[RMDB]
RNA sequence: GGGAACGACUCGAGUAGAGUCGAAAAUCACGCUCUAAUGGCAUGCGAAAGGAUGGGCUAGUGCCGUACGGAAACCAUCCAUAAUUGGCACGUUCCAUAAUAUUGAUGACGAUUGCAUGCGAAAGGAUGGACGAGCUCCACCAGCUUGCGUACGGAAAAGCCCAAACAAUUUCGAUUGUUUGGGCUUAAAAGAAACAACAACAACAAC
Reactivity to DMS in 0.01 (KOAc 150mM, MgCl2 10mM, bicine 150mM(pH8.5), 24C), signal-to-noise 2, nucleotides 027 to 156: u020c030a080c020g000c030u000c050u010a080a130u000g010g000c000a040u000g030c020g020a090a130a180g030g000a040u000g000g000g000c080u000a080g040u000g020c000c020g000u000a040c030g010g020a140a070a180c070c040a030u020c030c000a060u000a010a160u000u010g000g020c030a060c000g000u000u040c040c020a070u000a120a110u000a150u000u000g000a110u000g000a030c040g020a150u000u010g010c000a100u000g030c020g020a050a060a120g010g000a070u020g020g000a100c020g020a100g020c070u000c030c030a080c040c040a120g000c020u000u000g000c040g010u000a090c020g030g020a060a130
Reactivity to 2A3 in 0.01 (KOAc 150mM, MgCl2 10mM, bicine 150mM(pH8.5), 24C), signal-to-noise 2, nucleotides 027 to 156: u030c000a020c020g040c020u050c050u150a030a060u160g090g000c020a000u070g030c080g190a150a010a030g070g010a080u070g030g000g000c090u010a040g040u020g110c000c010g000u000a010c020g000g030a000a000a140c020c000a020u000c000c000a010u070a030a130u080u040g030g000c010a000c060g010u100u000c030c010a040u110a130a080u150a180u180u160g250a220u100g020a020c050g020a050u010u100g000c000a000u050g000c000g000a060a000a000g040g000a050u030g000g010a030c010g040a000g020c030u010c050c000a130c070c000a000g030c020u030u010g050c000g000u000a010c000g010g000a190a040

This 207-nucleotide RNA was probed chemically with DMS and 2A3. DMS adducts were read by reverse transcription with MarathonRT.